RNA sequence: GGGAACGACUCGAGUAGAGUCGAAAAACACACAGAACAGUGCGCAUAAAAACAAAAUUAAGCUUGCUAAUAAUAGCAUUCCGUAGAGCAUGAAUGAACUUCAAAAUAAAAAUGACACAGGAUAGUCAGAUAUUCUACGAGGAAAUGCAUACAUACCGCUUAUAAAAGUGUUCGCACUUUUAUAAGCAAAAGAAACAACAACAACAAC
Reactivity to 2A3 in 0.01 (KOAc 150mM, MgCl2 10mM, bicine 150mM(pH8.5), 24C), signal-to-noise 3, nucleotides 027 to 156: a000c080a000c010a000c010a020g160a150a050c030a040g080u050g020c050g020c050a050u160a100a090a050a020a030c080a070a110a110a020u120u090a080a040g030c020u060u110g000c010u100a100a080u090a180a050u050a170g000c000a000u040u000c020c000g000u010a010g010a000g030c070a040u090g050a060a030u060g020a040a020c020u050u050c030a020a060a050a100u200a050a110a050a020a040u070g000a030c020a000c030a110g170g000a060u030a040g010u020c000a000g010a050u080a030u080u000c010u000a010c020g010a070g050g040a030a070a030u010g000c030a020u050a110c010a000u100a060c020c090
Reactivity to DMS in 0.01 (KOAc 150mM, MgCl2 10mM, bicine 150mM(pH8.5), 24C), signal-to-noise 2, nucleotides 027 to 156: a080c040a070c020a060c040a160g020a080a090c100a140g000u000g030c000g030c060a180u000a040a080a070a070a150c050a060a090a090a170u010u000a060a100g010c070u000u010g030c000u010a110a100u000a090a070u000a030g020c050a080u000u000c010c010g040u010a060g000a150g000c060a070u000g030a090a050u010g000a070a100c080u000u000c020a080a050a070a060u010a010a060a040a080a150u000g000a070c000a020c070a090g080g010a100u000a080g010u000c040a060g020a100u010a060u000u010c010u010a010c020g010a190g000g000a030a050a030u010g030c030a170u000a080c050a060u010a100c060c030